[RMDB]
RNA sequence: GGGAACGACUCGAGUAGAGUCGAAAAACGAAACCCAAGGUGCAUGCCGAGGUGAGGUAGGCCUCGUUAACAAACCGCAAAAAAAUAGUCGCAAACGACGAAAACUACGCACUCGCAGCUUAAUAACAGUAGGGUCCCUACUUCGGUAGGGACCCAAGGUGAUAUUGUGGUUCGCCACAAUAUCACCAAAAGAAACAACAACAACAAC
Reactivity to 2A3 in 0.01 (KOAc 150mM, MgCl2 10mM, bicine 150mM(pH8.5), 24C), signal-to-noise 1, nucleotides 027 to 156: a000c070g050a060a000a040c000c010c040a060a080g120g010u060g010c050a090u130g030c090c000g000a030g010g040u060g010a060g000g170u020a030g040g000c000c000u000c000g010u050u120a040a020c060a030a040a030c090c020g080c110a000a120a000a000a000a080a080u230a000g020u030c050g050c080a030a080a090c080g000a000c000g020a060a000a000a000c010u070a010c080g010c090a000c030u080c090g060c020a020g000c060u050u150a060a000u070a300a020c010a040g100u140a050g020g010g000u000c000c000c000u000a000c000u000u120c100g060g000u000a000g040g000g040a000c000c000c000a000a000
Structure probing data (2A3) for a 207-nucleotide construct. It was measured as part of the RMDB library M2RFPK.